Chemical mapping of a 170-nucleotide RNA with 2A3 and DMS. Values cover nucleotides 27 to 129. The reactions ran in a buffer of 150 mM KOAc, 10 mM MgCl2 and 150 mM bicine (pH 8.5), at 24 C. For DMS, 23,512 sequencing reads were counted.
RNA sequence: GGGAACGACUCGAGUAGAGUCGAAAAGGGGAUUGCCUCGGCCCCCUCCCUAACACGGGAGUCUCGGGCCCCCUCCCAGGAAUGGAGACGGGGGGAAAUCGACCGGGUCCCGCAGAACCCGAUGGAGAGCCCGACAUGUUCGCAUGUCGGAAAAGAAACAACAACAACAAC
Reactivity to 2A3 in 0.01 (KOAc 150mM, MgCl2 10mM, bicine 150mM(pH8.5), 24C), signal-to-noise 9, nucleotides 027 to 129: g020g000g000g010a050u070u200g050c000c010u010c000g000g000c000c000c000c000c000u020c000c000c000u060a110a030c070a020c060g000g040g010a110g130u030c020u020c010g040g000g000c000c000c010c000c000u000c000c000c000a030g070g120a120a130u110g010g010a160g040a150c140g010g000g000g000g020g040a050a060a090u180c090g080a120c020c010g010g000g000u020c000c000c000g000c000a010g030a050a040c020c010c020g030a060u170g060g020a050g000a010g020c000
Reactivity to DMS in 0.01 (KOAc 150mM, MgCl2 10mM, bicine 150mM(pH8.5), 24C), signal-to-noise 6, nucleotides 027 to 129: g030g010g010g010a020u060u050g030c070c000u020c070g000g000c000c000c000c000c000u000c010c000c040u020a090a110c170a060c060g030g000g030a060g050u050c020u030c050g020g000g040c000c000c000c000c000u000c040c000c010a000g020g180a180a100u000g030g010a030g020a080c210g020g010g000g000g010g010a040a070a110u060c160g040a080c040c050g000g000g000u010c020c040c070g020c070a070g000a070a090c030c010c010g030a010u080g020g020a110g030a080g000c030